Chemical mapping of a 177-nucleotide RNA with DMS and 2A3.
The reactions ran in a buffer of 150 mM KOAc, 10 mM MgCl2 and 150 mM bicine (pH 8.5), at 24 C.
Values cover nucleotides 27 to 126.
2A3 adducts were read by reverse transcription with SuperScript II with manganese.
RNA sequence: GGGAACGACUCGAGUAGAGUCGAAAAACGAGCUCCCUUCGAUCCAAUCCAGGAGAGGAAGUGGUAGGAUGCAGCUGCCGGUUCAUGGAUACCUCUGCAGUGCAUGUCGUAGGCUUGCACUUGCAUGAGGUUCAUUAGUCUUCGGACUAAUGAACCUAAAAGAAACAACAACAACAAC
Reactivity to DMS in 0.01 (KOAc 150mM, MgCl2 10mM, bicine 150mM(pH8.5), 24C), signal-to-noise 8, nucleotides 027 to 126: a090c100g010a100g010c040u000c030c010c020u010u010c050g010a120u010c030c030a110a110u020c110c100a090g010g010a080g010a140g000g010a080a060g010u010g000g020u010a050g010g000a050u000g010c070a070g010c030u000g020c040c040g000g010u000u010c060a060u030g010g010a130u010a060c020c010u000c020u010g000c000a010g000u000g000c010a010u000g010u010c010g020u030a100g010g000c010u000u000g000c010a010c000u010u020g020c000a020u020g010
Reactivity to 2A3 in 0.01 (KOAc 150mM, MgCl2 10mM, bicine 150mM(pH8.5), 24C), signal-to-noise 9, nucleotides 027 to 126: a000c060g000a020g030c010u020c010c000c000u020u050c040g040a050u010c020c020a070a030u030c020c020a050g050g040a080g040a040g090g050a090a030g080u080g060g020u060a070g020g050a060u090g020c030a020g010c010u050g020c010c010g030g020u040u080c050a060u100g070g010a050u090a120c000c010u030c020u020g000c000a000g000u000g000c000a010u020g040u060c100g150u170a090g020g060c000u000u010g000c000a010c000u100u120g000c010a030u140g030